RNA sequence: GGGAACGACUCGAGUAGAGUCGAAAACAGUGCUGAAAUCAACGCCGGAGAUAUUGACGCGUGUCCCGCCGAGAAACUCUUGAUAGAGAUUGGUUAUACCGUAGACACUCGUAUUGACCACCCGUCAGUAGGGGAUAUGCUUCGGCAUAUCCCCUACAAAAGAAACAACAACAACAAC
Reactivity to 2A3 in 0.01 (KOAc 150mM, MgCl2 10mM, bicine 150mM(pH8.5), 24C), signal-to-noise 1, nucleotides 027 to 126: c000a010g030u050g000c020u060g060a110a110a120u120c030a040a030c110g080c020c060g130g000a050g000a070u150a010u120u210g050a000c020g030c020g000u020g030u070c020c020c020g000c020c010g000a050g080a010a210a110c000u000c000u050u130g120a070u100a110g060a050g010a080u090u250g030g040u070u040a060u070a150c030c080g000u070a060g060a100c020a010c020u010c080g020u120a080u080u070g040a000c020c020a040c170c050c000g110u040c000a020
Reactivity to DMS in 0.01 (KOAc 150mM, MgCl2 10mM, bicine 150mM(pH8.5), 24C), signal-to-noise 1, nucleotides 027 to 126: c080a060g000u000g000c010u010g000a070a020a010u000c070a040a120c170g030c020c020g000g030a100g000a050u020a020u010u000g010a160c150g030c150g010u010g000u000c000c040c020g010c040c030g010a090g010a090a070a120c020u000c000u000u010g030a130u000a170g000a090g020a090u000u000g020g000u000u000a110u000a120c150c080g010u000a050g000a090c150a070c040u000c010g000u000a120u000u000g010a040c030c050a080c060c010c010g000u000c090a090
The record gives the reactivity of an RNA of 177 nucleotides to 2A3 and DMS.
Source: RMDB library OK2TST, as collected in RNAgym.
For 2A3, 659 sequencing reads were counted.
2A3 adducts were read by reverse transcription with SuperScript II with manganese.
The reactions ran in a buffer of 150 mM KOAc, 10 mM MgCl2 and 150 mM bicine (pH 8.5), at 24 C.